This 177-nucleotide RNA was probed chemically with DMS and 2A3. It was measured as part of the RMDB libraries RFM100 and RFMREP. For DMS the reverse transcriptase was MarathonRT. The reactions ran in a buffer of 150 mM KOAc, 10 mM MgCl2 and 150 mM bicine (pH 8.5), at 24 C.

[RMDB]
RNA sequence: GGGAACGACUCGAGUAGAGUCGAAAAUGGAGUGUCUAUGAUGAUUGCUGCAGUUAAAGAGUUCGUAGUCGAAGUGGUUAUAACGGCGUAACAGGCCUUCUCUCAAGGAGGGUUAUGCGCCGUGAUUAACAAAGCUGUAGUUCGCUACAGCUUUGUUAAAAGAAACAACAACAACAAC
Reactivity to DMS in 0.01 (KOAc 150mM, MgCl2 10mM, bicine 150mM(pH8.5), 24C), signal-to-noise 4, nucleotides 027 to 126: u010g010g020a040g020u000g010u000c010u010a100u020g020a100u020g010a080u020u010g030c040u010g020c050a070g020u010u020a030a060a090g000a070g010u000u000c040g000u000a050g010u010c030g010a080a100g030u000g000g030u010u010a070u030a130a060c020g000g000c000g030u000a030a100c200a130g000g000c000c000u000u010c000u000c070u080c260a160a300g000g010a030g000g010g030u000u000a080u010g010c010g010c000c000g000u000g010a050u010u000
Reactivity to 2A3 in 0.01 (KOAc 150mM, MgCl2 10mM, bicine 150mM(pH8.5), 24C), signal-to-noise 5, nucleotides 027 to 126: u140g020g000a060g030u060g010u020c010u040a090u110g080a050u050g010a040u100u130g010c030u030g020c030a050g020u090u090a110a130a010g070a020g030u020u060c030g020u080a030g030u030c020g030a100a010g040u060g070g030u100u040a050u030a120a000c010g000g000c000g020u020a120a050c020a060g030g060c000c000u010u000c030u000c010u020c020a030a020g040g000a010g000g010g000u020u050a060u080g000c000g000c010c000g000u000g000a020u000u010